[RMDB]
RNA sequence: GGGAACGACUCGAGUAGAGUCGAAAAGUGCCGCUUGUCAUGAUACUGGCGGCCGUCGGUGUCGUGAGCCUACAGGCGACCGGAUUGCUGCAAUCUCGCCUUCGGCUAUCGAGCGAAGUUCUCGAGACUUUGAGCGGAUUUCGGGACGUCUCUGAGAACUCGCUAUAGUAUUCGUACUAUAGCGAGUAAAAGAAACAACAACAACAAC
Reactivity to 2A3 in 0.01 (KOAc 150mM, MgCl2 10mM, bicine 150mM(pH8.5), 24C), signal-to-noise 7, nucleotides 027 to 156: g100u120g030c000c010g010c030u000u000g030u090c080a190u140g090a110u130a150c020u020g010g000c000g020g040c040c020g020u030c010g000g020u080g050u050c020g020u040g100a020g040c000c020u050a040c060a040g000g020c010g010a050c080c110g050g010a030u030u070g100c190u110g050c100a020a030u000c050u020c040g010c010c000u020u050c030g030g000c020u030a090u050c020g020a010g010c060g040a100a040g050u100u020c020u020c020g020a030g010a010c100u180u170u140g040a030g060c020g060g030a100u050u120u110c040g020g030g050a080c030g030u000c020u000c040u080g050a040g040a100
Reactivity to DMS in 0.01 (KOAc 150mM, MgCl2 10mM, bicine 150mM(pH8.5), 24C), signal-to-noise 3, nucleotides 027 to 156: g010u000g020c010c010g000c010u020u000g020u010c050a120u020g010a140u000a050c010u000g020g020c000g030g040c070c040g000u000c000g030g010u000g020u000c030g030u000g010a130g000c040c010u010a200c050a040g010g020c000g010a170c060c040g020g010a120u000u000g020c050u000g020c060a080a090u000c030u000c010g020c090c010u000u010c100g020g000c020u000a100u000c080g000a100g020c020g010a080a120g020u000u000c030u000c010g000a070g010a040c030u000u010u000g020a090g040c060g000g000a170u000u000u000c020g010g010g020a100c070g010u000c010u000c020u000g000a130g000a090
Conditions: 150 mM KOAc, 10 mM MgCl2 and 150 mM bicine (pH 8.5), 24 C. Structure probing data (2A3 and DMS) for a 207-nucleotide construct. DMS adducts were read by reverse transcription with MarathonRT. For 2A3, 6,144 sequencing reads were counted.